Chemical mapping of a 177-nucleotide RNA with DMS. Reactivities are given for positions 27 through 126. The DMS profile rests on 734 reads. The data come from the RNA Mapping Database (RMDB), library OK2TRN. The reactions ran in a buffer of 150 mM KOAc, 10 mM MgCl2 and 150 mM bicine (pH 8.5), at 24 C.

[RMDB]
RNA sequence: GGGAACGACUCGAGUAGAGUCGAAAAAAAAGCUAUUAAUGUUUUGAGAAGAUUCAGGAAAGAGAUUGAAAGGAUGCUGAACAUCUUGAAUAGGAGACGCAGAUCUGCAGGCAUGAUCAUUAUGCUGCAUGGAUCGAGGUUUCGACCUCGAUCCAUGAAAAGAAACAACAACAACAAC
Reactivity to DMS in 0.01 (KOAc 150mM, MgCl2 10mM, bicine 150mM(pH8.5), 24C), signal-to-noise 1, nucleotides 027 to 126: a050a080a060a130g010c090u000a130u000u010a150a110u030g000u010u000u000u010g010a070g000a030a080g010a130u000u000c010a080g000g010a060a020a060g000a150g000a110u000u000g020a140a060a080g000g000a060u010g010c040u000g040a100a140c080a090u010c020u000u000g040a000a100u000a090g000g000a050g010a040c150g000c010a010g020a030u010c060u000g070c080a060g050g020c040a010u000g000a110u010c080a070u010u000a030u000g000c020u000g000